RNA sequence: GGGAACGACUCGAGUAGAGUCGAAAAAGGAGUAAGAGCAAUCUUACUUAUCGUCUAGUGGGUAAAAGACAUAAUAGGAAGCAAAUGCUUGGUUGUAACGAUCGAGAUAGAAUCUGUUGAUUUAAGCUGAAAGGCUGCAGACUUAUUAAAUGGGUGUUCAAUCUAAGUUCUUCGGAACUUAGAUUGAAAAAGAAACAACAACAACAAC
Reactivity to DMS in 0.01 (KOAc 150mM, MgCl2 10mM, bicine 150mM(pH8.5), 24C), signal-to-noise 1, nucleotides 027 to 156: a050g000g020a020g000u000a000a020g000a060g000c190a110a210u000c000u010u000a010c010u000u000a080u010c050g020u020c050u000a070g020u010g030g040g040u000a060a030a090a110g020a070c090a110u010a080a040u000a120g000g010a050a050g000c000a030a080a110u010g010c000u000u000g000g010u000u000g030u000a060a140c050g010a040u000c010g020a120g010a070u000a150g040a020a100u000c050u000g000u000u010g000a110u000u000u000a050a110g010c030u000g010a100a060a100g030g030c020u010g000c000a070g000a070c020u020u000a040u000u000a060a050a120u000g020g030g020u010g020u000
Reactivity to 2A3 in 0.01 (KOAc 150mM, MgCl2 10mM, bicine 150mM(pH8.5), 24C), signal-to-noise 3, nucleotides 027 to 156: a010g090g010a020g020u010a020a000g000a010g010c040a030a070u030c000u010u000a010c000u020u000a150u120c050g030u020c050u060a040g060u080g030g020g020u060a040a090a050a030g050a010c040a030u150a050a060u070a200g040g000a040a010g000c050a070a040a070u140g000c040u040u040g060g040u030u030g030u080a090a020c070g020a050u050c050g000a010g020a100u060a050g040a020a060u020c050u050g010u020u030g020a120u000u130u020a040a010g000c010u020g050a090a040a010g040g000c010u000g000c000a010g020a080c020u130u090a070u080u130a150a100a040u070g040g010g010u060g040u030

The record gives the reactivity of an RNA of 207 nucleotides to DMS and 2A3.
For DMS, 1,959 sequencing reads were counted.
The reactions ran in a buffer of 150 mM KOAc, 10 mM MgCl2 and 150 mM bicine (pH 8.5), at 24 C.
DMS adducts were read by reverse transcription with MarathonRT.
For 2A3, 1,931 sequencing reads were counted.